[RMDB]
RNA sequence: GGGAACGACUCGAGUAGAGUCGAAAAGCGUCCUGGUUCGCCAGGACGCAAAUAAAUGGUAGUCUGAGACCGUCUAACUCAGAUAACCAGAAAUAGACGGAAAAACUGACUUGUUCGCAAGUCAGAAGCUCUAUACUCUGUUCGCAGAGUAUAGAGCAAAAGAAACAACAACAACAAC
Reactivity to 2A3 in 0.01 (KOAc 150mM, MgCl2 10mM, bicine 150mM(pH8.5), 24C), signal-to-noise 3, nucleotides 027 to 126: g000c010g000u020c000c010u020g000g080u010u060c200g030c090c010a010g010g000a000c000g010c010a000a000a000u020a000a050a030u100g090g040u070a110g080u000c010u000g010a010g010a110c020c000g010u000c020u050a110a080c010u010c000a010g000a000u010a010a030c010c000a020g080a020a080a020u070a010g030a000c000g010g000a030a040a020a000a010c000u010g010a000c020u000u020g020u080u100c290g020c120a010a010g000u000c010a020g010a000a010
Reactivity to DMS in 0.01 (KOAc 150mM, MgCl2 10mM, bicine 150mM(pH8.5), 24C), signal-to-noise 1, nucleotides 027 to 126: g000c000g020u000c000c000u010g000g020u000u030c300g040c000c000a010g000g000a020c000g010c000a000a030a080u000a060a080a150u000g020g000u000a180g000u020c000u000g000a010g000a200c020c000g040u030c030u000a100a070c000u010c000a000g020a030u010a170a110c010c000a020g000a030a070a070u030a020g000a000c030g000g000a250a040a040a160a110c000u000g000a010c000u000u010g000u000u020c130g050c000a020a000g000u000c000a020g010a100a030